[RMDB]
RNA sequence: GGGAACGACUCGAGUAGAGUCGAAAAGAUAUGGAGCGCAACCCAGCGAAGAACUAGCUCGGAAACGAGCUAGGGAGCUGGUUGACGCUCCUAAGUCAAAAUCUUUCACUCUUCGGAGUGAAAGAAAGAUGAAAUCGUUGUUCGCAACGAUUUCAUCAAAAGAAACAACAACAACAAC
Reactivity to 2A3 in 0.01 (KOAc 150mM, MgCl2 10mM, bicine 150mM(pH8.5), 24C), signal-to-noise 1, nucleotides 027 to 126: g040a000u030a000u110g000g000a000g000c000g000c010a030a030c050c120c140a020g000c040g220a300a040g000a020a010c000u000a000g020c000u000c000g000g020a030a040a010c000g030a000g000c000u000a010g020g010g000a000g010c110u140g000g010u030u030g160a060c000g000c000u000c000c000u000a000a000g020u020c010a000a040a000a290u000c010u000u010u000c010a000c000u000c020u050u090c300g210g030a000g010u030g000a000a000a000g010a020a000a000
Reactivity to DMS in 0.01 (KOAc 150mM, MgCl2 10mM, bicine 150mM(pH8.5), 24C), signal-to-noise 2, nucleotides 027 to 126: g010a050u010a240u010g000g010a010g020c000g000c060a010a020c100c050c300a080g010c010g020a090a160g020a170a300c010u000a000g010c010u000c020g020g000a040a040a110c000g020a010g020c000u000a020g000g000g000a060g000c010u010g040g000u000u020g000a190c000g020c000u000c000c000u000a000a050g000u000c010a080a100a100a140u010c000u000u030u020c000a000c000u000c000u010u020c270g000g000a010g010u010g000a000a000a000g000a010a080a060
The record gives the reactivity of an RNA of 177 nucleotides to 2A3 and DMS. As a SHAPE reagent, 2A3 marks flexible, mostly unpaired nucleotides at the ribose 2'-OH. The data come from the RNA Mapping Database (RMDB), library TTRDES. For DMS the reverse transcriptase was MarathonRT.